[RMDB]
RNA sequence: GGGAACGACUCGAGUAGAGUCGAAAAUCGACAAUCCGGUCGCGCCGUACGAGCUCGUGAAGACGAUGCGCGCGUCGAUCCUCGUGCUCGGCCCGCUCCUCGCGCGCUUCGGCUACGCGAAGGUGUAGGUACUCCCAUCAUUCGUGAUGGGAGUACCAAAAGAAACAACAACAACAAC
Reactivity to DMS in 0.01 (KOAc 150mM, MgCl2 10mM, bicine 150mM(pH8.5), 24C), signal-to-noise 2, nucleotides 027 to 126: u010c020g040a040c160a130a150u000c080c020g000g010u000c040g050c190g020c050c080g060u010a060c050g010a120g010c050u000c020g010u000g010a110a030g000a020c020g020a030u000g010c020g030c080g000c060g000u010c050g000a020u000c050c020u010c130g000u010g030c090u000c020g000g010c000c020c020g000c090u000c010c010u010c000g000c010g010c300g010c000u000u000c040g000g000c020u000a060c050g000c010g010a040a060g020g000u010g000u030a090
Reactivity to 2A3 in 0.01 (KOAc 150mM, MgCl2 10mM, bicine 150mM(pH8.5), 24C), signal-to-noise 2, nucleotides 027 to 126: u140c000g000a010c030a040a040u060c050c060g080g060u070c010g000c000g000c040c010g020u140a190c020g030a050g080c020u010c030g110u090g120a130a030g030a030c040g020a070u120g020c000g010c010g000c020g030u010c020g000a050u040c010c010u090c040g030u200g010c020u010c010g010g060c000c030c010g030c010u020c000c020u020c000g000c000g000c000g000c000u050u100c060g060g000c000u050a040c020g010c000g020a050a020g050g000u080g040u080a050